[RMDB]
RNA sequence: GGGAACGACUCGAGUAGAGUCGAAAAAUUGAACGCCGCAAGCUACUCAAAGCAUUAGGCGCGAAUCUGGUGCUGACCGAAGGGGCGAAAGGGAUGAAAGGCGCUAUUCAGAAAGCCGAAGAAAUUGGCUAAUUUAGUAUUUCGAUACUAAAUUAGCAAAAGAAACAACAACAACAAC
Reactivity to DMS in 0.01 (KOAc 150mM, MgCl2 10mM, bicine 150mM(pH8.5), 24C), signal-to-noise 9, nucleotides 027 to 126: a100u020u020g000a130a160c050g020c010c010g020c160a090a070g020c020u000a060c100u030c150a090a080a030g010c020a030u010u010a090g010g010c030g010c160g010a080a080u010c020u000g010g010u000g010c030u010g000a150c080c060g010a110a080g020g000g000g010c030g000a040a070a080g010g000g000a080u020g000a060a090a090g000g010c040g000c080u010a090u020u020c080a090g010a070a110a130g010c010c020g010a070a090g010a040a090a110u030u030g000
Reactivity to 2A3 in 0.01 (KOAc 150mM, MgCl2 10mM, bicine 150mM(pH8.5), 24C), signal-to-noise 9, nucleotides 027 to 126: a010u160u150g030a090a030c030g010c010c010g040c110a060a020g020c010u070a090c030u070c130a130a170a030g000c020a050u060u130a030g020g000c010g000c030g070a020a050u040c040u050g040g000u050g010c010u020g040a080c010c030g030a070a050g050g020g010g000c030g030a100a030a030g060g020g030a040u080g070a060a050a060g030g000c020g000c050u060a100u050u090c010a010g110a080a070a010g020c030c030g010a040a020g060a030a110a050u180u160g080
Overview:
Chemical mapping of a 177-nucleotide RNA with DMS and 2A3. DMS adducts were read by reverse transcription with MarathonRT.